Chemical mapping of a 177-nucleotide RNA with DMS and 2A3. The data come from the RNA Mapping Database (RMDB), libraries RFM100 and RFMREP. 2A3 adducts were read by reverse transcription with SuperScript II with manganese.
[RMDB]
RNA sequence: GGGAACGACUCGAGUAGAGUCGAAAAACGUCACCAUACGUGGUGACGACAGGAAGGGCUGGUUUCUCCAGUAAUUUGUAUCUCUAUCACAGCAUCAAUUACUGUUGAUGUCAGCCCCUUUCUGGAACUUCUCCAGGCAAUUCGUUGCCUGGAGAAGAAAAGAAACAACAACAACAAC
Reactivity to DMS in 0.01 (KOAc 150mM, MgCl2 10mM, bicine 150mM(pH8.5), 24C), signal-to-noise 2, nucleotides 027 to 126: a070c060g030u000c000a020c060c020a040u000a090c290g050u000g020g000u000g000a010c000g020a080c020a000g000g030a000a010g030g000g000c000u000g000g000u000u000u000c000u000c050c000a000g000u000a000a000u000u000u030g040u020a100u020c030u020c230u000a140u030c200a210c250a050g010c300a130u000c010a010a000u000u000a000c000u000g000u000u010g000a000u000g020u010c000a000g020c140c000c000c000u000u000u030c000u010g010g000a160a040
Reactivity to 2A3 in 0.01 (KOAc 150mM, MgCl2 10mM, bicine 150mM(pH8.5), 24C), signal-to-noise 5, nucleotides 027 to 126: a000c020g000u010c000a000c010c000a030u040a080c300g100u030g000g010u000g000a000c000g010a020c000a000g000g010a000a000g010g000g010c000u000g010g020u000u010u010c010u020c000c000a010g000u000a010a030u020u090u110g160u090a120u050c060u010c050u110a180u300c090a150c060a150g110c050a030u040c020a030a000u000u000a000c000u000g000u000u020g000a010u010g020u020c000a010g020c000c000c010c010u010u000u000c000u000g000g000a000a020